[RMDB]
RNA sequence: GGGAACGACUCGAGUAGAGUCGAAAACCGCCCAGGGACCGCCCCCGAUCUUGGGCAUAAGAUUCGUGUGCGUUGGCCCGGUCCUUUCGGUUCCGGAUUCCUCAGCCCCCAGCCCCCCGGGGUCGUCCACAAAUAAGCUGUUCGCAGCUUAUUUGUGAAAAGAAACAACAACAACAAC
Reactivity to DMS in 0.01 (KOAc 150mM, MgCl2 10mM, bicine 150mM(pH8.5), 24C), signal-to-noise 3, nucleotides 027 to 126: c020c040g020c070c010c000a050g010g000g010a030c060c060g010c040c010c030c010c020g010a040u010c030u000u010g000g000g040c070a090u030a060a040g000a110u010u000c060g030u010g010u020g020c050g010u010u010g000g010c180c040c020g000g000u010c010c020u010u020u010c090g010g020u020u010c050c020g000g000a160u010u010c020c020u000c070a120g010c010c010c000c010c030a170g000c060c010c010c030c020c060g000g000g020g010u000c030g020u000c050
Reactivity to 2A3 in 0.01 (KOAc 150mM, MgCl2 10mM, bicine 150mM(pH8.5), 24C), signal-to-noise 6, nucleotides 027 to 126: c010c000g000c020c000c000a020g010g020g020a030c020c030g020c020c000c010c000c010g020a020u020c020u040u060g050g040g020c030a060u180a080a040g050a050u100u140c060g010u060g030u040g090c060g040u070u090g050g000c030c030c010g010g010u020c010c000u090u130u110c080g040g000u080u040c030c020g010g020a040u050u040c010c010u040c010a020g020c000c000c000c000c010a020g020c010c000c010c000c000c000g000g010g000g020u010c020g030u010c010

The record gives the reactivity of an RNA of 177 nucleotides to DMS and 2A3. Conditions: 150 mM KOAc, 10 mM MgCl2 and 150 mM bicine (pH 8.5), 24 C. Reactivities are rounded to 0.1 and cut off at 0 and 3. For 2A3 the reverse transcriptase was SuperScript II with manganese.